[RMDB]
The record gives the reactivity of an RNA of 177 nucleotides to 2A3 and DMS. 2A3 adducts were read by reverse transcription with SuperScript II with manganese. It was measured as part of the RMDB library OK2TST.
RNA sequence: GGGAACGACUCGAGUAGAGUCGAAAAGCGUGGGAUGUCAAAGGGUCGAUUGCACCAAUCAGGCCAAAAACAUACAGUGACGGCCGAUUGAUUCCCCAAGUGAGAGUAAUUGAUCCAGGACUCGGGGGACGCAAACGGUAUUCGUACCGUUUGCGUCAAAAGAAACAACAACAACAAC
Reactivity to 2A3 in 0.01 (KOAc 150mM, MgCl2 10mM, bicine 150mM(pH8.5), 24C), signal-to-noise 1, nucleotides 027 to 126: g070c090g030u130g020g120g030a050u180g110u070c030a080a100a120g030g010g000u000c030g010a010u010u030g010c000a020c000c020a030a010u000c100a130g000g000c030c000a030a050a050a090a000c060a030u300a050c070a060g050u010g040a000c000g060g030c000c000g010a010u010u040g000a010u070u090c010c010c000c000a010a090g030u120g130a110g030a000g070u060a030a050u050u020g010a020u020c050c010a080g060g070a010c050u040c100g050g020g000g020
Reactivity to DMS in 0.01 (KOAc 150mM, MgCl2 10mM, bicine 150mM(pH8.5), 24C), signal-to-noise 1, nucleotides 027 to 126: g000c120g060u000g010g000g000a040u010g000u000c080a110a150a170g000g040g010u010c010g000a040u000u000g020c000a090c150c020a000a070u000c010a080g070g000c000c000a020a030a160a040a010c030a210u000a070c300a100g000u000g010a300c210g010g040c000c000g010a080u010u000g010a180u010u000c060c000c000c070a070a050g030u000g000a050g020a080g020u000a010a080u000u000g010a000u000c000c010a230g000g010a000c000u000c120g010g000g050g000